RNA sequence: GGGAACGACUCGAGUAGAGUCGAAAAACGUACCUAUUCGUAGGUACGUGAUUAAAAGCUAGUCAUAUAAAAGGAAGACUAGCAAUAUAGAAUCCUAUUUUAAUAGCACAUGUUUCGACAUGUGCAAUAUGCUUAUGGAAUUCGUUCCAUAAGCAUAAAAAGAAACAACAACAACAAC
Reactivity to 2A3 in 0.01 (KOAc 150mM, MgCl2 10mM, bicine 150mM(pH8.5), 24C), signal-to-noise 6, nucleotides 027 to 126: a000c010g000u000a010c000c000u000a020u020u070c210g060u030a000g000g000u000a000c010g010u010g000a000u030u110a020a060a060a010g000c010u000a000g000u000c020a050u190a030u120a300a200a070a020g170g050a100a160g000a010c000u000a000g000c000a000a010u050a010u010a010g120a030a040u000c010c010u010a140u040u120u030u080a210a210u150a050g010c010a000c000a010u010g010u020u090u090c170g070a020c000a000u000g000u000g000c000a000a000
Reactivity to DMS in 0.01 (KOAc 150mM, MgCl2 10mM, bicine 150mM(pH8.5), 24C), signal-to-noise 6, nucleotides 027 to 126: a020c000g020u010a000c000c000u010a010u000u010c170g030u000a010g000g010u010a010c010g010u000g000a070u000u000a070a080a130a140g000c000u000a000g000u000c010a160u010a170u010a070a080a150a080g000g000a200a190g000a010c010u000a000g000c010a020a030u010a110u000a110g000a130a120u000c010c000u000a070u010u010u010u010a070a170u010a140g010c010a000c000a000u000g010u000u000u010c160g010a020c000a000u000g010u000g010c010a020a040

Chemical mapping of a 177-nucleotide RNA with 2A3 and DMS.
The RNA was probed in 150 mM KOAc, 10 mM MgCl2 and 150 mM bicine (pH 8.5) at 24 C.
For DMS, 7,456 sequencing reads were counted.
For 2A3 the reverse transcriptase was SuperScript II with manganese.